Description
The record gives the reactivity of an RNA of 207 nucleotides to 2A3 and DMS. Conditions: 150 mM KOAc, 10 mM MgCl2 and 150 mM bicine (pH 8.5), 24 C. For DMS the reverse transcriptase was MarathonRT. 2A3 adducts were read by reverse transcription with SuperScript II with manganese. The 2A3 profile rests on 1,532 reads.
RNA sequence: GGGAACGACUCGAGUAGAGUCGAAAAUUGAAGAAGAGCUGGAAGAUACACUUGUUGACAUUGUUGAGUCUCCCAGGGAGGAGUCAGUUGUGAGCUUGUUUCACACAGUUCCAGACCUAGAAACAACUAAAGACUUGAGACAACAACUCUUCUCAAGGAUACUAUGGGACUUCGGUCCCAUAGUAUCAAAAGAAACAACAACAACAAC
Reactivity to 2A3 in 0.01 (KOAc 150mM, MgCl2 10mM, bicine 150mM(pH8.5), 24C), signal-to-noise 3, nucleotides 027 to 156: u040u050g030a030a020g010a030a010g020a020g040c070u020g060g030a060a040g050a150u160a090c090a020c100u050u070g030u030u030g040a090c080a140u060u030g010u030u000g040a080g010u000c030u020c060c040c020a030g030g010g000a040g000g000a010g060u070c080a040g000u040u020g000u010g000a020g000c070u080u090g030u020u090u030c020a040c000a000c010a030g020u100u030c060c040a040g060a100c050c000u000a050g040a020a020a010c030a030a000c030u130a170a040a030g040a060c000u110u120g040a010g020a080c010a030a000c000a010a040c040u010c010u040u000c000u000c000a020a030g090
Reactivity to DMS in 0.01 (KOAc 150mM, MgCl2 10mM, bicine 150mM(pH8.5), 24C), signal-to-noise 2, nucleotides 027 to 156: u000u020g000a110a080g010a060a020g000a020g050c020u020g020g020a090a090g030a240u010a090c060a100c030u000u000g010u000u010g010a160c120a150u010u000g010u000u000g030a060g020u000c020u010c010c060c060a140g030g010g030a070g000g010a060g030u010c020a110g030u000u000g020u000g000a040g010c090u010u010g010u000u020u000c020a080c000a300c060a090g000u000u000c010c010a090g010a180c030c040u010a090g010a190a060a040c060a020a120c090u000a100a070a140g000a090c070u000u010g020a230g010a080c020a070a060c060a030a000c010u000c040u000u020c010u000c010a040a060g020
The DMS profile rests on 2,501 reads.